[RMDB]
RNA sequence: GGGAACGACUCGAGUAGAGUCGAAAAGGCGUAGCGGCUUAGGAUGCGCACCCAGCGGCCAGGUGGGGGCGAUGCAGCGCAGGCCACGACCGGCGAGUCGCUCACUGACCCGUCGCCAUAGUUGACCCUACCGUGGGCUGUUCGCAGCCCACGGUAGAAAAGAAACAACAACAACAAC
Reactivity to 2A3 in 0.01 (KOAc 150mM, MgCl2 10mM, bicine 150mM(pH8.5), 24C), signal-to-noise 1, nucleotides 027 to 126: g030g000c050g080u080a000g000c080g080g000c000u190u240a140g180g090a010u060g030c020g000c000a100c000c000c010a060g060c020g000g080c020c020a150g020g000u050g000g000g010g000g000c080g080a140u110g000c300a020g000c130g050c150a060g000g140c000c000a030c050g100a040c000c000g020g010c020g000a020g000u000c000g000c000u130c000a110c020u050g110a180c000c010c000g000u020c020g080c000c030a080u060a030g020u030u100g030a170c010c010